[RMDB]
RNA sequence: GGGAACGACUCGAGUAGAGUCGAAAAGAAAGAAAGAAAGAACGGAUGUUGAGGUAGGCUCAGUAGAUGCGAUCAGAGUUGUGCCUCAGGCGUUCCUCACAUCUUCUUGCCUAACUCGCCUUCCUAACCAUUGUCCAGUCUUCGGACUGGACAAUGGAAAAGAAACAACAACAACAAC
Reactivity to 2A3 in 0.01 (KOAc 150mM, MgCl2 10mM, bicine 150mM(pH8.5), 24C), signal-to-noise 5, nucleotides 027 to 126: g040a010a030a000g110a020a180a000g090a030a070a010g050a040a000c060g050g010a090u090g040u180u120g030a020g010g000u010a010g010g000c010u040c170a050g030u090a020g040a060u080g090c110g070a090u110c080a030g000a020g030u030u100g090u150g080c000c010u100c040a020g000g010c010g010u030u010c020c000u010c000a030c000a010u000c000u040u000c000u020u060g000c000c000u040a060a040c010u010c020g020c010c020u080u060c010c010u030a080a060
Reactivity to DMS in 0.01 (KOAc 150mM, MgCl2 10mM, bicine 150mM(pH8.5), 24C), signal-to-noise 2, nucleotides 027 to 126: g010a020a060a030g010a020a060a080g040a100a080a050g000a070a020c140g000g000a050u010g000u030u000g000a020g000g000u010a100g000g010c000u000c140a050g040u000a060g050a040u000g070c110g000a080u010c210a140g020a020g000u000u030g000u020g010c020c000u070c100a050g000g000c000g000u000u000c020c000u000c020a040c050a110u000c000u000u010c010u000u010g000c010c010u000a020a050c050u000c070g000c100c040u020u000c010c000u010a050a260
Structure probing data (2A3 and DMS) for a 177-nucleotide construct. The RNA was probed in 150 mM KOAc, 10 mM MgCl2 and 150 mM bicine (pH 8.5) at 24 C. DMS adducts were read by reverse transcription with MarathonRT.